Source information
Chemical mapping of a 177-nucleotide RNA with 2A3. It was measured as part of the RMDB library RFM100. Conditions: 150 mM KOAc, 10 mM MgCl2 and 150 mM bicine (pH 8.5), 24 C. For 2A3 the reverse transcriptase was SuperScript II with manganese.

RNA sequence: GGGAACGACUCGAGUAGAGUCGAAAAGGAGAAGAUCAAGCUUUGAAAUGGCCCGUUUACACAUUUUGAUACAACCGUAGACGGCGUCUCGUUUCAAAGACCGUGUGGUUGUCUAUCAGUAUAUACUACGGAGAUUAGUCUUCGGACUAAUCUCCGUAAAAGAAACAACAACAACAAC
Reactivity to 2A3 in 0.01 (KOAc 150mM, MgCl2 10mM, bicine 150mM(pH8.5), 24C), signal-to-noise 1, nucleotides 027 to 126: g040g000a150g050a060a110g020a000u040c090a100a000g100c000u030u000u000g000a000a000a000u000g000g000c000c000c000g010u150u000u000a000c040a000c000a150u060u060u040u000g300a270u150a250c150a150a000c010c060g000u000a000g000a080c030g050g050c090g000u000c180u010c130g000u000u100u290c060a000a000a000g050a000c000c000g000u050g060u060g100g000u000u000g080u000c050u050a050u000c010a010g090u050a050u000a000u050a210c060u040